[RMDB]
RNA sequence: GGGAACGACUCGAGUAGAGUCGAAAAUGUGGAUGGGACUGGCUUUCUGCGCUCUUCAGAUCUCUGAAAAGAGUUGGUGCAUUCGCACUAAAUCUUUGUAUUGCGACGAACUUGUUUGUAGCGGAUACUCGAAGUCGAAUUUCGAUUCGACUUCGAGAAAAGAAACAACAACAACAAC
Reactivity to 2A3 in 0.01 (KOAc 150mM, MgCl2 10mM, bicine 150mM(pH8.5), 24C), signal-to-noise 2, nucleotides 027 to 126: u150g030u000g080g010a020u020g070g000g020a060c040u100g020g020c040u010u110u000c030u040g000c000g070c060u010c000u050u000c000a050g020a050u040c050u070c060u160g080a000a000a000a040g010a030g000u050u100g040g000u030g010c020a110u200u170c090g000c000a000c000u000a000a070a040u000c000u030u000u080g110u170a090u030u170g030c030g000a000c000g010a020a070c040u040u160g050u180u060u050g030u020a010g070c030g000g040a020u080a030
Reactivity to DMS in 0.01 (KOAc 150mM, MgCl2 10mM, bicine 150mM(pH8.5), 24C), signal-to-noise 1, nucleotides 027 to 126: u060g020u000g000g000a050u070g010g000g000a030c040u000g010g030c020u000u000u000c040u010g020c060g000c030u010c040u010u040c090a010g020a120u020c080u010c000u000g000a090a020a030a020g000a040g000u020u000g010g020u010g000c000a260u000u060c100g050c000a000c000u000a000a000a000u000c000u000u000u000g000u000a090u010u030g000c010g000a030c100g010a150a130c110u000u000g030u000u000u050g010u020a080g000c000g000g000a200u000a140
Description:
An RNA of 177 nucleotides, treated with 2A3 and DMS and read out base by base. For 2A3 the reverse transcriptase was SuperScript II with manganese.